[RMDB]
RNA sequence: GGGAACGACUCGAGUAGAGUCGAAAAAUUGCACAGAGAAAAGCUACCACACGUAACACACCAGUUGGCUAUUGUUAGUUUACAAAAGCUAAUACAUGAGAUUGAGCUGGAGUACUCCAAAAUGUUAUGAGGAACUUAUCUUCGGAUAAGUUCCUCAAAAAGAAACAACAACAACAAC
Reactivity to DMS in 0.01 (KOAc 150mM, MgCl2 10mM, bicine 150mM(pH8.5), 24C), signal-to-noise 1, nucleotides 027 to 126: a060u010u000g000c050a080c020a020g020a200g000a120a060a180a090g010c010u000a030c050c040a040c070a050c110g000u000a050a060c020a060c070a080c080c000a030g010u010u000g000g030c050u000a050u000u000g010u000u000a030g040u000u010u000a100c210a080a070a100a040g000c010u000a050a040u000a050c290a100u000g010a060g000a140u020u000g000a150g010c040u030g000g000a150g000u000a100c060u000c070c050a020a020a030a130u010g000u000u000a040